This 177-nucleotide RNA was probed chemically with 2A3.
It was measured as part of the RMDB library OK1LIB.
For 2A3, 597 sequencing reads were counted.

[RMDB]
RNA sequence: GGGAACGACUCGAGUAGAGUCGAAAAUAGACGAGGAUUAGACCUCCUAUUCUGGGAACAAGGGGGUUUGUGCAAGGCCAUACAGGAGCAAUGUUGCUUCCUCAACAUCAGUAACACUCAUGUAUCCAGUCAGUCGGUUCUUCGGAACCGACUGACUAAAAGAAACAACAACAACAAC
Reactivity to 2A3 in 0.01 (KOAc 150mM, MgCl2 10mM, bicine 150mM(pH8.5), 24C), signal-to-noise 1, nucleotides 027 to 126: u150a000g070a060c100g000a000g020g000a000u110u190a100g060a040c000c000u070c000c000u000a060u070u080c090u180g000g000g100a070a030c030a040a120g030g020g000g000g000u000u000u100g060u040g060c020a060a050g040g000c020c070a080u060a120c000a090g090g000a060g020c040a030a090u090g020u030u040g030c000u110u020c040c070u130c030a120a180c070a050u190c000a000g020u040a120a000c010a030c000u000c000a010u030g010u010a050u050c030c000